This 170-nucleotide RNA was probed chemically with DMS and 2A3.

[RMDB]
RNA sequence: GGGAACGACUCGAGUAGAGUCGAAAAAAGACGAGUGAUGAGCUUUGCGUGAAUCUUAAUUUACCCGCAAAUGUCCCAUACUCUCGUGUUAUUUCCAGGAUGGGCUUUAAACUCGAUGCAACAGUUCAGACAUAGGCCUUCGGGCCUAUGAAAAGAAACAACAACAACAAC
Reactivity to DMS in 0.01 (KOAc 150mM, MgCl2 10mM, bicine 150mM(pH8.5), 24C), signal-to-noise 4, nucleotides 027 to 129: a090a080g020a030c020g010a020g030u030g020a000u010g020a070g000c000u000u010u000g020c000g000u070g040a120a050u000c300u080u050a110a110u050u030u020a140c180c050c020g000c010a000a000a000u020g000u050c020c030c000a000u000a100c000u020c010u000c020g020u000g030u000u000a130u010u010u010c040c050a050g050g050a020u010g020g010g030c000u000u000u000a060a050a070c010u010c040g010a040u040g040c000a040a080c120a160g000u060u030c080a060g020a210
Reactivity to 2A3 in 0.01 (KOAc 150mM, MgCl2 10mM, bicine 150mM(pH8.5), 24C), signal-to-noise 4, nucleotides 027 to 129: a000a000g070a010c020g000a010g000u010g020a010u000g000a000g000c000u000u000u000g020c000g000u070g040a040a070u050c110u100u210a160a140u140u080u140a100c020c010c000g000c010a010a010a030u110g080u220c000c020c000a020u080a170c030u010c000u000c010g000u060g060u040u050a070u030u030u000c000c000a010g050g040a030u040g010g000g000c000u110u090u060a070a050a000c030u040c030g020a040u060g010c040a070a050c010a080g000u040u010c020a000g010a040
The reactions ran in a buffer of 150 mM KOAc, 10 mM MgCl2 and 150 mM bicine (pH 8.5), at 24 C. Reactivities are given for positions 27 through 129.